[RMDB]
An RNA of 177 nucleotides, treated with 2A3 and read out base by base.
For 2A3 the reverse transcriptase was SuperScript II with manganese.
The reactions ran in a buffer of 150 mM KOAc, 10 mM MgCl2 and 150 mM bicine (pH 8.5), at 24 C.

RNA sequence: GGGAACGACUCGAGUAGAGUCGAAAAGGCACCGCCCGUAGUCCGACUUCCCCCGGCGGUCCGCGGGCCGAAGUUGUUCCAGGGAUUGGCCUUCGUGGUGUCACGGCGACGGCUGCUGGGGCGGUUCCCGUUCUAGCCAUUUCGAUGGCUAGAACGGAAAAGAAACAACAACAACAAC
Reactivity to 2A3 in 0.01 (KOAc 150mM, MgCl2 10mM, bicine 150mM(pH8.5), 24C), signal-to-noise 2, nucleotides 027 to 126: g050g020c040a010c040c010g060c030c000c000g040u040a010g050u060c040c050g010a080c060u080u110c000c000c000c000c040g020g000c010g010g030u030c010c000g000c040g020g000g000c050c040g060a060a020g040u220u210g040u210u100c000c000a060g000g090g060a150u140u120g050g050c000c000u030u040c020g040u070g040g090u060g050u070c080a060c130g120g050c020g030a020c040g050g110c000u000g010c010u030g020g000g030g000c040g010g050u040u000c000